Source information: An RNA of 207 nucleotides, treated with 2A3 and read out base by base. Conditions: 150 mM KOAc, 10 mM MgCl2 and 150 mM bicine (pH 8.5), 24 C.
[RMDB]
RNA sequence: GGGAACGACUCGAGUAGAGUCGAAAAAGCCACCGCUACGGCGGUGGCAAGUAGAAAAGUUGGUGCUUAGACCACGCCCUCUACCGUAAUAAUAGAUAAACAGGCGAGUAUCAGUACGCUGAUACAAAAAACACUCACACGUUCGCGUGUGAGUGAAGACGUGCAUAGAGUUCGCUCUAUGCACGUCAAAAGAAACAACAACAACAAC
Reactivity to 2A3 in 0.01 (KOAc 150mM, MgCl2 10mM, bicine 150mM(pH8.5), 24C), signal-to-noise 1, nucleotides 027 to 156: a000g010c000c000a000c020c000g130c000u040a030c290g180g000c020g000g010u020g010g010c030a000a000g000u020a000g000a000a000a040a000g060u060u040g030g020u060g020c210u200u120a030g050a070c020c000a010c020g000c000c010c000u000c000u010a010c060c040g020u020a020a020u060a160a050u100a180g120a070u200a040a080a000c030a020g060g000c030g070a000g010u000a000u000c000a010g010u030a020c170g040c090u010g030a010u060a060c100a000a240a000a000a010a000c010a000c000u000c000a000c000a000c000g000u010u030c200g000c000g140u000g000u000g000a000g000u010g000a000a010